[RMDB]
This 177-nucleotide RNA was probed chemically with 2A3 and DMS. 2A3 adducts were read by reverse transcription with SuperScript II with manganese.
RNA sequence: GGGAACGACUCGAGUAGAGUCGAAAAGCCGUGCUCGACAGGGAGCAGAAAAUGCAGAGCUAUCCCGUCGUUUCGCUAAACAAAUGCGAAACGACAAAUUGCGUUACAUACGCAAUCCUCUAAUGAACCUAUGUAGGCAAUUCGUUGCCUACAUAGGAAAAGAAACAACAACAACAAC
Reactivity to 2A3 in 0.01 (KOAc 150mM, MgCl2 10mM, bicine 150mM(pH8.5), 24C), signal-to-noise 9, nucleotides 027 to 126: g000c000c010g050u020g000c010u030c030g090a110c110a200g210g120g010a020g020c020a010g130a010a160a010a020u260g010c070a020g050a050g050c010u020a040u060c010c000c000g010u000c000g000u000u000u010c000g000c000u050a180a220a120c070a050a110a030u110g000c000g000a000a000a000c000g000a000c000a000a070a000u010u010g000c000g010u020u100a190c070a140u250a030c040g000c000a000a010u030c020c020u090c040u140a160a200u190g070a050a040
Reactivity to DMS in 0.01 (KOAc 150mM, MgCl2 10mM, bicine 150mM(pH8.5), 24C), signal-to-noise 6, nucleotides 027 to 126: g020c030c050g020u000g010c000u000c010g020a180c250a160g000g000g010a020g010c020a060g000a060a070a100a080u010g020c120a070g010a100g010c040u000a130u000c010c010c010g030u000c000g000u000u000u000c000g000c000u020a030a130a140c300a060a090a060u020g000c000g000a010a000a010c000g010a000c010a010a040a040u000u000g010c000g010u010u000a080c250a110u010a030c000g000c010a020a020u000c070c030u010c070u000a090a120u020g000a110a160